Structure probing data (2A3 and DMS) for a 177-nucleotide construct.
For DMS, 2,275 sequencing reads were counted.
2A3 adducts were read by reverse transcription with SuperScript II with manganese.
The RNA was probed in 150 mM KOAc, 10 mM MgCl2 and 150 mM bicine (pH 8.5) at 24 C.
The data come from the RNA Mapping Database (RMDB), library M2PK90.
RNA sequence: GGGAACGACUCGAGUAGAGUCGAAAACAGUUAUGUGCGUCCCUCCCGAAGCUGCGCGCUCGGUCGAAGAGGACGACCAUCGCCGAUAGAGGACGAGCGGUCUUCGGUCAAGGGAAUAAGAGUAAAAACACGUUCUUGAAUUCGUUCAAGAACGUGUAAAAGAAACAACAACAACAAC
Reactivity to 2A3 in 0.01 (KOAc 150mM, MgCl2 10mM, bicine 150mM(pH8.5), 24C), signal-to-noise 2, nucleotides 027 to 126: c010a010g020u200u140a190u260g140u160g100c080g040u000c010c010c000u020c040c000c010g000a010a000g000c130u130g010c170g010c020g020c080u020c060g050g060u040c030g010a070a040g090a120g090g030a050c030g030a020c030c000a150u090c050g000c030c000g100a060u100a060g080a030g030g080a090c000g010a020g020c000g010g010u030c000u030u000c020g040g000u000c030a030a010g000g000g110a000a010u110a050a020g050a010g120u120a010a040a040a040
Reactivity to DMS in 0.01 (KOAc 150mM, MgCl2 10mM, bicine 150mM(pH8.5), 24C), signal-to-noise 3, nucleotides 027 to 126: c070a140g010u010u010a020u020g020u000g010c080g020u000c010c000c010u000c110c000c000g030a020a020g010c180u000g010c040g020c040g040c010u010c010g010g020u000c010g000a110a130g030a130g010g000a100c120g010a050c100c070a150u000c070g020c110c030g020a070u000a100g000a180g000g000a050c020g000a050g000c060g010g010u010c010u000u000c010g000g000u000c250a050a020g000g010g010a040a080u010a060a070g000a120g010u000a030a050a070a100
DMS adducts were read by reverse transcription with MarathonRT.